Source: RMDB library OK3TST, as collected in RNAgym. Chemical mapping of a 207-nucleotide RNA with 2A3 and DMS. For DMS, 8,518 sequencing reads were counted. For DMS the reverse transcriptase was MarathonRT. Reactivities are given for positions 27 through 156.
RNA sequence: GGGAACGACUCGAGUAGAGUCGAAAAAAAAGGGAAAUUUGUGUGUGAUAAGUAACAAUAACAUUGGCUCUGAUGGAUUAGUCUACACUGAUAUUUUCAUGUCAUCGCAGAGAAGCACUUUUCUGCAUCCAGUAUAAUGUCCGUGCCUUCAUGAACAGUUUUAAAUACCUUUCGAGGUAUUUAAAACAAAAGAAACAACAACAACAAC
Reactivity to 2A3 in 0.01 (KOAc 150mM, MgCl2 10mM, bicine 150mM(pH8.5), 24C), signal-to-noise 6, nucleotides 027 to 156: a010a000a010a030g140g010g010a090a080a080u090u110u050g040u010g010u010g010u010g020a070u040a120a050g100u070a090a040c050a120a080u100a140a030c050a090u050u060g030g000c010u020c020u060g050a060u050g050g000a020u030u070a030g020u020c040u060a030c040a000c060u020g010a010u010a070u090u090u040u070c110a070u060g070u070c040a040u080c110g000c020a010g010a000g010a060a010g060c080a080c090u020u030u010u000c000u010g010c000a020u020c030c010a010g020u040a080u030a150a050u050g020u020c030c020g010u020g020c010c020u060u090c030a050u120g040a070a040c030a040
Reactivity to DMS in 0.01 (KOAc 150mM, MgCl2 10mM, bicine 150mM(pH8.5), 24C), signal-to-noise 3, nucleotides 027 to 156: a070a040a080a100g000g000g000a060a050a070u010u010u010g030u000g020u000g030u020g010a120u000a040a070g020u010a100a090c050a050a090u000a060a080c060a300u000u010g010g020c010u000c040u000g010a120u000g010g000a080u000u010a080g000u000c010u000a040c040a070c040u010g000a040u010a050u000u000u000u010c120a070u000g010u000c030a060u000c090g050c040a030g030a060g020a020a050g010c140a050c120u000u000u040u000c020u010g020c010a120u000c030c020a110g020u000a060u010a050a050u000g010u000c020c050g020u000g000c030c020u000u000c050a060u010g020a050a100c080a130